[RMDB]
RNA sequence: GGGAACGACUCGAGUAGAGUCGAAAAGAAAUAAUAAGCGAGCGAGCGAGCGAAACUGUCGAAAAGUACAUGAGAGUGUAUGAAAAAUAGCGUGGAAAAGACAGGAAAGACAUGCGAAAAUAAAAGAGGGAUACAAUAUCUUCGGAUAUUGUAUCCCAAAAGAAACAACAACAACAAC
Reactivity to DMS in 0.01 (KOAc 150mM, MgCl2 10mM, bicine 150mM(pH8.5), 24C), signal-to-noise 2, nucleotides 027 to 126: g000a140a060a100u000a050a120u030a050a180g040c050g030a120g020c110g000a010g030c020g000a070g000c060g040a050a040a070c010u000g020u000c040g010a000a050a080a190g000u000a030c040a000u000g010a100g010a040g000u000g000u020a000u040g000a040a010a010a010a020u040a040g020c020g000u000g020g020a080a100a060a060g030a060c080a030g000g050a040a070a090g020a060c070a030u000g050c040g000a090a100a030a050u090a100a040a030a090g010a200
Reactivity to 2A3 in 0.01 (KOAc 150mM, MgCl2 10mM, bicine 150mM(pH8.5), 24C), signal-to-noise 2, nucleotides 027 to 126: g020a000a040a000u200a080a020u130a140a040g100c040g070a050g020c020g040a040g040c060g030a000g030c020g050a000a030a080c000u000g010u000c000g000a000a000a050a080g000u010a020c000a050u030g080a010g000a020g140u010g000u010a020u050g110a000a200a000a000a000u140a050g060c010g040u050g000g050a040a000a000a000g020a030c000a010g030g000a000a120a000g080a030c040a030u120g040c070g110a130a090a110a000u300a010a070a040a000g140a050